[RMDB]
RNA sequence: GGGAACGACUCGAGUAGAGUCGAAAAGGCCCUAUAAAUAAGGUUGCUGCUACUUUUGCCCAAACUCAAGUUGACACACUUCCAUAUUUAAUGGGUGGAGUUGGCGUUGCAAUUUGUAUACCUCCAAAUAGUCAUCAUGAUUCGUCAUGAUGACUAUAAAAGAAACAACAACAACAAC
Reactivity to DMS in 0.01 (KOAc 150mM, MgCl2 10mM, bicine 150mM(pH8.5), 24C), signal-to-noise 6, nucleotides 027 to 126: g000g010c010c020c020u010a210u030a030a050a090u030a080a090g000g010u000u000g010c100u000g010c000u010a060c030u000u010u010u010g010c030c030c070a060a070a220c090u020c100a040a040g010u000u020g000a150c100a150c070a100c060u000u020c040c020a070u010a050u020u020u010a050a160u010g000g000g010u000g010g000a060g010u000u000g000g020c140g010u000u000g010c070a030a060u020u000u000g010u020a080u040a100c050c030u030c000c030a060a100
Reactivity to 2A3 in 0.01 (KOAc 150mM, MgCl2 10mM, bicine 150mM(pH8.5), 24C), signal-to-noise 5, nucleotides 027 to 126: g150g000c000c000c000u020a070u050a080a130a010u170a040a050g070g000u030u040g030c050u010g000c000u020a020c020u030u020u120u210g010c010c010c030a030a070a110c070u100c090a090a050g050u060u080g110a040c020a020c000a000c080u070u030c040c050a100u080a150u160u200u130a230a060u100g000g020g020u040g040g010a070g010u090u110g040g000c050g090u150u090g000c010a010a030u010u010u090g030u020a150u080a170c000c010u000c000c020a110a230

Structure probing data (DMS and 2A3) for a 177-nucleotide construct. It was measured as part of the RMDB library OK1LIB. For DMS, 13,351 sequencing reads were counted. Conditions: 150 mM KOAc, 10 mM MgCl2 and 150 mM bicine (pH 8.5), 24 C. Values cover nucleotides 27 to 126. The 2A3 profile rests on 2,978 reads.